[RMDB]
RNA sequence: GGGAACGACUCGAGUAGAGUCGAAAAUUCGACAAGGAGCUGGAGCUGAUCGAAGAGCAGUGGCGCAGCGAGACCAACGAGCUGGUCGAUCUCGUCUCCUCGCUGCAAGACGAGAACAAGCGGCUGGAUGGGGACUAGCAUUCGUGCUAGUCCCCAUAAAAGAAACAACAACAACAAC
Reactivity to 2A3 in 0.01 (KOAc 150mM, MgCl2 10mM, bicine 150mM(pH8.5), 24C), signal-to-noise 2, nucleotides 027 to 126: u080u010c000g060a000c090a020a070g060g030a070g050c000u000g060g010a020g020c030u140g040a060u100c050g060a130a030g100a030g000c010a000g030u060g050g000c070g010c000a030g020c000g020a000g020a060c020c000a000a060c040g010a030g030c010u120g000g050u090c010g030a080u000c020u000c000g080u000c060u050c020c010u030c060g030c020u110g040c010a030a040g030a000c090g010a020g030a030a010c100a180a000g030c010g000g000c000u020g020g020
Reactivity to DMS in 0.01 (KOAc 150mM, MgCl2 10mM, bicine 150mM(pH8.5), 24C), signal-to-noise 2, nucleotides 027 to 126: u040u010c040g000a070c000a110a130g040g020a040g020c030u030g000g000a120g050c010u030g000a040u040c000g000a080a090g040a030g000c050a060g010u000g000g000c300g060c000a000g010c050g000a000g000a030c220c260a040a010c010g000a120g010c020u000g000g000u060c250g000a090u040c000u030c010g000u010c030u000c240c020u000c110g000c010u040g000c080a020a300g000a030c090g010a090g000a080a030c180a090a140g000c060g070g000c010u000g000g000
The record gives the reactivity of an RNA of 177 nucleotides to 2A3 and DMS. Source: RMDB library OK1LIB, as collected in RNAgym. Reactivities are given for positions 27 through 126. The reactions ran in a buffer of 150 mM KOAc, 10 mM MgCl2 and 150 mM bicine (pH 8.5), at 24 C. For DMS, 1,389 sequencing reads were counted.